[RMDB]
RNA sequence: GGGAACGACUCGAGUAGAGUCGAAAAUACUGCCGCCAAUUCAGGCAACCAGCGGCGAAUAAACACGCCGUCUUGGUCAAAACGCUCACCCUGGGUGGUGGGGUUAAAGAUACGAAAGUAAGGUGCGUAACAAUGCUGUCUUCGGACAGCAUUGUUAAAAAGAAACAACAACAACAAC
Reactivity to DMS in 0.01 (KOAc 150mM, MgCl2 10mM, bicine 150mM(pH8.5), 24C), signal-to-noise 1, nucleotides 027 to 126: u020a160c040u000g040c060c010g020c030c000a130a110u000u000c060a100g020g000c180a110a050c010c000a000g000c030g000g000c000g000a030a020u010a090a140a180c180a140c010g000c000c010g010u000c030u000u030g030g030u000c130a060a060a060a060c080g000c030u000c060a040c100c000c020u000g030g050g010u000g000g040u010g000g000g020g040u000u010a060a040a130g010a120u010a040c090g000a090a040a050g010u030a060a150g000g000u000g010c100g020